[RMDB]
RNA sequence: GGGAACGACUCGAGUAGAGUCGAAAAGAUAUGGAGAGCAGCUUUUGACGCGAGGCGGUUCGGAAACGAACCGUGCUCGCGAUAAGCUGCUCCUAAGUCAAUGCAUCAUAACUUCGGUUAUGAUGAACAGAGGAAGGAAGUUCGCUUCCUUCCUCUGAAAAGAAACAACAACAACAAC
Reactivity to 2A3 in 0.01 (KOAc 150mM, MgCl2 10mM, bicine 150mM(pH8.5), 24C), signal-to-noise 3, nucleotides 027 to 126: g050a020u180a090u300g060g020a200g010a000g280c010a000g000c020u120u060u120u260g190a080c030g000c010g020a000g000g040c040g000g000u000u010c020g040g000a030a000a090c000g010a000a010c010c000g010u010g020c010u000c000g000c000g000a000u000a000a000g000c000u000g000c000u000c000c000u000a060a000g040u000c060a080a120u200g090c000a000u000c000a000u000a000a020c000u050u080c190g060g000u000u000a000u010g000a010u000g000a000a040
Reactivity to DMS in 0.01 (KOAc 150mM, MgCl2 10mM, bicine 150mM(pH8.5), 24C), signal-to-noise 4, nucleotides 027 to 126: g010a030u000a190u000g010g010a110g020a030g010c000a000g000c000u010u000u000u000g000a190c110g010c000g010a020g010g010c020g020g000u000u010c000g000g010a150a080a200c000g010a000a010c010c000g010u000g010c000u000c000g020c000g010a020u000a010a020g000c000u000g010c000u010c000c000u000a030a300g020u000c030a080a090u000g010c020a010u000c000a000u010a010a010c010u010u010c230g050g000u000u000a000u000g010a010u000g000a070a170

Annotation
An RNA of 177 nucleotides, treated with 2A3 and DMS and read out base by base. Values cover nucleotides 27 to 126. For DMS the reverse transcriptase was MarathonRT.